[RMDB]
RNA sequence: GGGAACGACUCGAGUAGAGUCGAAAACUUGAGAUUCUUGUUGACCUUCCGGAGCUCCCUCUCGAGUUCCUCCUUUCUUCUUCUUCCAUCGAUCCACUUUCCGAGUGCCUCUUCUCUCCCCCUCCGGCCAGGCCACACUUCGGUGUGGCCAAAAGAAACAACAACAACAAC
Reactivity to 2A3 in 0.01 (KOAc 150mM, MgCl2 10mM, bicine 150mM(pH8.5), 24C), signal-to-noise 2, nucleotides 027 to 129: c010u070u080g030a020g030a140u090u040c050u100u070g050u070u070g050a130c000c030u020u000c010c010g000g000a000g000c040u020c000c050c010u060c020u020c030g020a000g040u040u020c000c020u010c000c000u030u020u010c020u030u010c000u030u000c000u040u000c000c000a080u020c050g070a020u050c010c010a080c060u030u020u010c010c000g050a030g020u090g030c000c040u000c000u040u010c010u000c000u010c000c000c000c000c000u000c000c000g000g010c020c020a000
Reactivity to DMS in 0.01 (KOAc 150mM, MgCl2 10mM, bicine 150mM(pH8.5), 24C), signal-to-noise 1, nucleotides 027 to 129: c030u050u000g000a060g000a090u040u000c040u030u020g000u050u040g030a170c120c050u080u030c000c000g030g000a100g040c030u000c020c020c130u010c020u030c040g000a120g010u020u050c130c030u040c030c010u050u030u030c010u020u010c010u040u010c000u000u020c080c060a080u000c030g000a150u000c040c060a000c030u020u020u050c000c000g050a110g000u030g020c060c010u060c060u000u010c010u040c020u020c020c050c000c050c020u000c000c060g010g060c130c100a060
An RNA of 170 nucleotides, treated with 2A3 and DMS and read out base by base. The 2A3 profile rests on 4,854 reads. 2A3 adducts were read by reverse transcription with SuperScript II with manganese. Conditions: 150 mM KOAc, 10 mM MgCl2 and 150 mM bicine (pH 8.5), 24 C. Source: RMDB library 15KLIB, as collected in RNAgym.